Notes:
Chemical mapping of a 177-nucleotide RNA with 2A3. Reactivities are given for positions 27 through 126. It was measured as part of the RMDB library RFMREP.
[RMDB]
RNA sequence: GGGAACGACUCGAGUAGAGUCGAAAACAGCGUGUUUCCAAGGGCCUUGGCUGGCUGUGGCCAUGGGAUCUCCAGCUGUAGACCAGAGUAACUGGAGAACUUGGACAGCCCAGGUCAGCACAGUGCCGUACGUGAGGAGGUUCGCCUCCUCACGUACAAAAGAAACAACAACAACAAC
Reactivity to 2A3 in 0.01 (KOAc 150mM, MgCl2 10mM, bicine 150mM(pH8.5), 24C), signal-to-noise 1, nucleotides 027 to 126: c020a030g110c070g060u010g020u030u040u030c060c020a080a150g100g020g000c010c000u060u050g030g040c000u000g000g080c040u090g110u170g060g000c000c010a020u070g000g000g110a120u020c000u030c000c000a010g000c030u020g050u140a100g160a180c080c020a020g000a000g060u160a140a160c010u020g010g020a010g000a000a000c000u000u020g070g000a040c080a030g000c040c000c000a030g000g110u050c000a000g040c030a090c000a070g010u050g200c000c000
Conditions: 150 mM KOAc, 10 mM MgCl2 and 150 mM bicine (pH 8.5), 24 C.